The record gives the reactivity of an RNA of 177 nucleotides to 2A3 and DMS.
Reactivities are given for positions 27 through 126.
[RMDB]
RNA sequence: GGGAACGACUCGAGUAGAGUCGAAAAAAGGUGGAAUAAUACCCAAAUAGCAAUACCAAAAACAGCACCUUGUCCAAUUGCUAAGUAAGCGUAUUUUUUAACUAAUAUGCAGUAAAUAAUUGCAAUGCAGGCUUAUUGUGUUCGCACAAUAAGCCUGAAAAGAAACAACAACAACAAC
Reactivity to 2A3 in 0.01 (KOAc 150mM, MgCl2 10mM, bicine 150mM(pH8.5), 24C), signal-to-noise 2, nucleotides 027 to 126: a000a030g060g000u150g010g080a190a030u260a090a000u040a090c000c000c000a130a000a000u090a050g000c050a040a000u050a250c090c090a090a090a030a040a000c070a000g110c000a010c000c000u020u040g000u000c030c000a090a000u030u000g000c030u100a120a060g030u100a210a040g090c000g040u000a040u000u020u000u020u100u030a030a000c010u050a030a010u060a030u000g000c000a000g260u130a000a160a160u190a070a120u110u100g020c030a020a020u020g030
Reactivity to DMS in 0.01 (KOAc 150mM, MgCl2 10mM, bicine 150mM(pH8.5), 24C), signal-to-noise 2, nucleotides 027 to 126: a000a000g020g040u000g000g000a120a060u010a100a010u010a050c040c050c050a010a140a080u010a090g020c060a050a010u020a090c130c150a080a020a030a180a030c220a090g000c000a020c000c000u000u040g000u020c020c110a040a020u020u000g000c010u020a070a100g010u000a040a060g010c040g010u000a000u000u000u070u000u060u060a090a130c110u030a030a000u000a000u000g000c050a050g000u010a060a050a140u030a060a110u050u000g000c050a020a070u020g000
The data come from the RNA Mapping Database (RMDB), library OK1LIB. For 2A3 the reverse transcriptase was SuperScript II with manganese.